[RMDB]
RNA sequence: GGGAACGACUCGAGUAGAGUCGAAAAAUAAAUAAGCCCGGAUAGCUCAGUCGGUAGAGCAUCAGCCUUUUAAGCUGAGGGUCGAGCGUUCGUGUCGCUCUUCGGGCGCCAAAUAAAGCUAAAAAAAGCAUUACCUUAGAUUCGUCUAAGGUAAUGCAAAAGAAACAACAACAACAAC
Reactivity to 2A3 in 0.01 (KOAc 150mM, MgCl2 10mM, bicine 150mM(pH8.5), 24C), signal-to-noise 1, nucleotides 027 to 126: a000u100a040a050a030u110a170a000g020c000c000c000g010g000a020u040a000g020c010u020c020a020g110u090c080g120g150u130a000g000a020g090c000a000u010c020a010g000c010c000u180u300u090u220a060a040g000c000u000g020a000g010g040g110u010c020g000a030g080c030g020u060u040c060g050u070g010u180c070g000c000u010c000u010u020c000g020g020g010c010g030c000c000a050a060a020u200a080a050a020g020c110u120a050a090a020a020a050a020a050
Reactivity to DMS in 0.01 (KOAc 150mM, MgCl2 10mM, bicine 150mM(pH8.5), 24C), signal-to-noise 1, nucleotides 027 to 126: a070u000a060a090a070u020a050a220g010c010c000c000g050g010a080u010a050g000c000u000c010a030g010u010c080g010g000u010a080g000a010g010c000a090u000c010a010g010c000c040u000u000u010u040a130a220g010c010u000g030a010g000g010g000u010c000g000a040g000c010g060u010u010c060g040u010g010u000c160g000c010u000c050u000u000c000g000g010g000c000g000c050c030a060a030a100u010a090a100a130g040c200u010a010a010a050a070a030a160a090